[RMDB]
RNA sequence: GGGAACGACUCGAGUAGAGUCGAAAAGGUGAUGGGAAUUUGGCAUGCAGACCAGGUUGGUACAUUAUGUGAGUGAUAGAAUGCCUAAUGAGAUUUGAUGCCAGCUCACAAAGACUCAAUUCCCAGAGGUAAACUUGCUGAACUUGUCAAAUGAAUCAACCAAGUCUUGAUUCGUCAAGACUUGGUUAAAAGAAACAACAACAACAAC
Reactivity to DMS in 0.01 (KOAc 150mM, MgCl2 10mM, bicine 150mM(pH8.5), 24C), signal-to-noise 2, nucleotides 027 to 156: g040g010u050g000a170u000g000g000g020a050a120u000u000u000g000g030c020a040u000g020c070a100g000a120c080c040a080g000g040u000u010g000g000u000a060c100a070u000u000a080u010g020u000g020a090g080u000g030a200u010a140g000a010a060u000g020c030c030u000a080a100u000g000a180g000a080u000u000u000g010a110u000g030c050c030a100g010c070u000c050a060c040a050a060a270g020a070c020u000c050a050a170u000u010c000c010c030a160g020a050g010g000u000a080a030a170c050u000u000g000c000u020g020a050a120c110u000u000g020u010c020a060a060a100u010g010a080a110u000c030
Reactivity to 2A3 in 0.01 (KOAc 150mM, MgCl2 10mM, bicine 150mM(pH8.5), 24C), signal-to-noise 2, nucleotides 027 to 156: g060g000u090g050a090u090g050g060g050a180a090u090u040u050g000g050c030a020u050g000c010a020g000a000c040c060a000g000g070u060u090g010g070u100a120c020a080u050u160a110u160g050u000g000a040g020u040g020a010u060a140g100a080a100u050g030c000c010u120a080a040u140g020a030g100a140u110u040u080g020a010u020g010c040c050a030g000c010u010c000a030c020a000a080a000g030a050c000u010c030a060a100u030u010c020c000c010a010g020a000g020g010u050a000a260a000c000u030u090g000c030u020g040a090a040c030u090u050g040u040c000a020a020a060u040g050a030a020u090c000

Chemical mapping of a 207-nucleotide RNA with DMS and 2A3. The data come from the RNA Mapping Database (RMDB), library OK3TST. The RNA was probed in 150 mM KOAc, 10 mM MgCl2 and 150 mM bicine (pH 8.5) at 24 C.